An RNA of 177 nucleotides, treated with 2A3 and DMS and read out base by base. It was measured as part of the RMDB library OK1LIB. 2A3 adducts were read by reverse transcription with SuperScript II with manganese. The 2A3 profile rests on 2,282 reads. DMS adducts were read by reverse transcription with MarathonRT.
[RMDB]
RNA sequence: GGGAACGACUCGAGUAGAGUCGAAAAGUCGACGUCGUGGUGGCCGGUGCGGCCAUCUUUGGUGGGAUCGUCAUGAUGUCCUCCAUGACGCCGGUGGGCGUGGUGGCCGGCGCGGUGAUUGUCGUAAAUGCAGGUUCUAUUUCGAUAGAACCUGCAUAAAAGAAACAACAACAACAAC
Reactivity to 2A3 in 0.01 (KOAc 150mM, MgCl2 10mM, bicine 150mM(pH8.5), 24C), signal-to-noise 4, nucleotides 027 to 126: g120u100c000g020a030c000g000u080c030g050u130g240g110u040g160g000c000c010g050g070u170g090c020g000g030c000c000a000u000c000u050u060u050g040g030u070g010g020g050a070u090c020g120u140c080a090u160g020a020u110g110u200c000c000u000c000c000a010u030g040a040c010g000c000c000g100g070u300g110g020g000c010g000u040g000g080u020g040g030c020c000g040g020c040g000c010g000g060u070g020a110u070u210g020u030c030g040u040a090a140
Reactivity to DMS in 0.01 (KOAc 150mM, MgCl2 10mM, bicine 150mM(pH8.5), 24C), signal-to-noise 2, nucleotides 027 to 126: g000u000c000g010a060c050g000u010c010g010u010g010g020u010g030g000c020c000g030g020u000g020c010g030g010c010c010a000u020c000u000u000u000g020g020u000g000g010g000a020u010c010g020u050c290a080u060g010a020u010g010u010c000c000u010c000c000a000u000g010a040c020g010c010c000g030g010u070g020g000g020c030g040u000g010g030u010g010g000c020c010g030g010c010g000c020g000g020u010g000a090u010u030g000u000c010g000u000a040a090